[RMDB]
RNA sequence: GGGAACGACUCGAGUAGAGUCGAAAAUAGAAGAAGAGGCUAGGUGGUAUUCCGGUGUGGGAUACUUGGUAAUAUGUAACGCUAAUUGCAUAAGAUUGUAGGACGGAAUUUACAGUCUUGGUUUUUACAUUUGUUGAAUUUUCGAAUUCAACAAAUGAAAAGAAACAACAACAACAAC
Reactivity to 2A3 in 0.01 (KOAc 150mM, MgCl2 10mM, bicine 150mM(pH8.5), 24C), signal-to-noise 9, nucleotides 027 to 126: u130a010g080a070a010g030a040a010g030a010g040g010c060u060a020g040g080u050g030g010u080a040u050u020c020c010g120g070u150g050u150g070g030g010a020u030a060c010u030u050g030g010u070a050a050u070a080u160g080u060a060a020c040g010c110u070a090a080u110u060g010c020a030u020a110a010g020a040u020u030g010u010a010g010g070a030c130g060g030a070a040u080u050u030a030c010a010g010u000c000u010u030g030g010u020u020u000u020u030a040
Reactivity to DMS in 0.01 (KOAc 150mM, MgCl2 10mM, bicine 150mM(pH8.5), 24C), signal-to-noise 8, nucleotides 027 to 126: u020a080g010a090a090g010a090a080g000a070g000g010c050u010a050g020g020u010g010g010u010a040u000u000c040c030g010g030u020g030u020g010g010g000a050u000a030c040u010u010g010g000u010a040a070u010a050u010g000u010a060a060c160g010c090u010a060a100u010u000g000c040a050u010a020a030g000a030u000u000g010u000a030g000g000a080c140g020g020a090a100u010u010u010a020c030a030g000u000c020u000u000g010g010u000u000u010u010u010a170

Conditions: 150 mM KOAc, 10 mM MgCl2 and 150 mM bicine (pH 8.5), 24 C. Structure probing data (2A3 and DMS) for a 177-nucleotide construct. It was measured as part of the RMDB libraries RFM100 and RFMREP.